[RMDB]
RNA sequence: GGGAACGACUCGAGUAGAGUCGAAAAGUCUUUGUACCUGAUGCGAUUAUAAAGCAAUGAGACUGAUUGUCAUGUGUCGGUUGUGGGAUCCGUCUCAGUUACUUUAUAGCCGUGCCUGGUACCUAAACUUACUAUGUAUUUUCGAAUACAUAGUAAGAAAAGAAACAACAACAACAAC
Reactivity to DMS in 0.01 (KOAc 150mM, MgCl2 10mM, bicine 150mM(pH8.5), 24C), signal-to-noise 9, nucleotides 027 to 126: g000u000c030u000u000u000g010u000a010c000c000u000g000a040u000g010c000g010a030u000u000a010u000a010a010a020g010c050a080a090u000g000a020g010a020c000u000g000a020u000u000g010u020c010a020u000g010u010g010u010c140g010g020u010u010g050u000g000g000g000a010u000c010c120g010u000c000u000c000a020g010u010u000a070c010u000u000u000a010u000a010g010c040c010g020u000g010c080c010u000g000g010u000a010c010c160u010a040a060a150
Reactivity to 2A3 in 0.01 (KOAc 150mM, MgCl2 10mM, bicine 150mM(pH8.5), 24C), signal-to-noise 9, nucleotides 027 to 126: g030u010c030u040u110u100g000u000a000c000c000u020g010a040u030g010c000g000a000u000u010a000u010a020a020a000g050c100a030a040u010g000a000g000a000c010u010g010a010u010u070g300u250c020a040u060g120u060g160u230c100g180g120u240u150g010u060g020g020g010a000u000c010c010g000u000c000u000c000a020g040u040u050a010c000u000u000u000a000u000a000g000c000c000g000u000g010c000c010u000g000g000u000a010c000c000u080a090a050a010
The record gives the reactivity of an RNA of 177 nucleotides to DMS and 2A3. The reactions ran in a buffer of 150 mM KOAc, 10 mM MgCl2 and 150 mM bicine (pH 8.5), at 24 C. For 2A3 the reverse transcriptase was SuperScript II with manganese. DMS adducts were read by reverse transcription with MarathonRT.